[RMDB]
RNA sequence: GGGAACGACUCGAGUAGAGUCGAAAAGUCUUUUUGACCAAAGACAAGUGAUGAUUGCAGGGCUUGUCAAUCUAACAGUUUUCGACAAUGAAUCCAAUGUGGUCAUUGACACAAUUUCUGUUGAAACAAUAGCCACCCAUUUCGAUGGGUGGCUAUUAAAAGAAACAACAACAACAAC
Reactivity to DMS in 0.01 (KOAc 150mM, MgCl2 10mM, bicine 150mM(pH8.5), 24C), signal-to-noise 1, nucleotides 027 to 126: g000u000c000u000u000u000u000u050g000a180c120c100a170a040a040g000a000c000a210a140g000u000g000a040u000g000a210u000u000g030c000a120g030g000g000c000u000u000g000u000c000a090a090u000c170u030a010a090c200a140g000u010u000u000u000c180g050a090c050a070a010u000g010a000a120u000c020c050a090a040u000g080u060g000g000u000c030a000u050u070g000a090c280a080c200a070a010u000u000u000c000u000g000u040u000g000a040a040a130c120
Reactivity to 2A3 in 0.01 (KOAc 150mM, MgCl2 10mM, bicine 150mM(pH8.5), 24C), signal-to-noise 1, nucleotides 027 to 126: g000u000c000u000u100u000u040u300g100a100c060c030a010a000a000g030a040c040a070a000g080u040g070a080u050g030a040u010u010g100c090a070g150g000g000c000u000u000g010u000c000a000a000u000c040u060a000a120c000a110g000u000u000u080u140c060g050a000c000a000a000u100g040a060a090u030c050c050a060a300u190g050u100g040g000u040c060a020u040u040g200a010c030a000c060a100a140u030u150u060c010u060g010u020u060g080a020a000a160c100